The record gives the reactivity of an RNA of 207 nucleotides to 2A3.
RNA sequence: GGGAACGACUCGAGUAGAGUCGAAAACAGGUCGAUAGUACCAAUAACCCUGGUACCAAUAAGGUACUAUCGACCAUUUAGCUCUUCUUCUACAACACGCUCGCUGAAGAAGAGCUUUUCAGGUACCAGGGAAGCGAGCGCAAGGCCGAGAGGCCGAGGCAUUAUACCGUUUCGACGGUAUAAUGCCAAAAGAAACAACAACAACAAC
Reactivity to 2A3 in 0.01 (KOAc 150mM, MgCl2 10mM, bicine 150mM(pH8.5), 24C), signal-to-noise 1, nucleotides 027 to 156: c070a030g000g020u000c000g000a000u010a020g030u040a030c040c090a060a210u230a070a120c000c000c010u000g000g000u010a000c020c030a050a100u180a150a130g000g000u000a000c000u000a000u010c000g000a000c010c000a000u060u050u110a010g000c010u000c000u000u000c010u000u040c000u080a180c160a290a030c150a030c130g030c000u000c000g000c030u010g010a000a000g000a000a000g000a000g000c000u000u020u050u000c000a000g000g000u000a000c000c000a000g000g010g010a010a000g000c000g000a000g040c010g000c060a090a130g000g000c000c010g080a060g010a030g040g000c000c000g000a000
The RNA was probed in 150 mM KOAc, 10 mM MgCl2 and 150 mM bicine (pH 8.5) at 24 C.